[RMDB]
RNA sequence: GGGAACGACUCGAGUAGAGUCGAAAACACACAACACACACACAUACUGGGCAAAUGUGCCGUGAUUACCACUAACUAUUUUGUAAACAAAGUACUGUGUUAAUUCUGUUUUAAACUGCUUUAUCCAGGAUUGUAGAACAAUGGGCAGAAGUGUUUAGGCCGUGGUAGCUUUCGAGCUACCACGGCCAAAAGAAACAACAACAACAAC
Reactivity to 2A3 in 0.01 (KOAc 150mM, MgCl2 10mM, bicine 150mM(pH8.5), 24C), signal-to-noise 1, nucleotides 027 to 156: c030a010c000a020c040a050a100c060a050c000a010c000a000c000a000c000a090u020a080c060u060g010g030g020c040a050a130a060u170g060u110g000c010c000g020u020g030a060u110u030a040c030c020a000c020u040a020a030c030u010a160u110u140u050u010g190u210a120a140a090c080a040a040a000g010u000a010c070u030g010u030g000u100u020a030a070u060u070c030u060g110u020u020u000u140a070a140a160c050u100g000c040u040u030u100a080u100c020c020a020g000g060a180u050u100g050u070a000g050a120a000c060a110a080u020g040g000g040c000a000g010a060a020g040u010g040u020u000u110a000

An RNA of 207 nucleotides, treated with 2A3 and read out base by base. Conditions: 150 mM KOAc, 10 mM MgCl2 and 150 mM bicine (pH 8.5), 24 C. It was measured as part of the RMDB library OK3TST.